RNA sequence: GGGAACGACUCGAGUAGAGUCGAAAAAAAAAGAUAUGGAUCUACCUUGCUCAGCACCGCACAAGGCGACUCGGAAACGAGUCGAACUACCUUGUGGCGGUGCCCAUGGUAGAUCCUAAGUCAAAAACAAACCUACAGUCUUCGGACUGUAGGUUUGAAAAGAAACAACAACAACAAC
Reactivity to DMS in 0.01 (KOAc 150mM, MgCl2 10mM, bicine 150mM(pH8.5), 24C), signal-to-noise 1, nucleotides 027 to 126: a060a040a040a050a110g010a030u000a300u000g000g000a000u000c010u000a000c000c000u000u000g020c250u000c300a060g000c010a010c000c000g010c000a050c020a020a010g000g000c010g010a000c000u010c000g030g000a070a050a160c000g000a020g010u000c000g060a010a000c130u000a300c020c000u000u000g020u000g010g090c010g000g040u000g020c000c250c000a000u020g000g010u000a010g010a020u010c000c030u000a000a060g000u000c030a040a050a120a260a110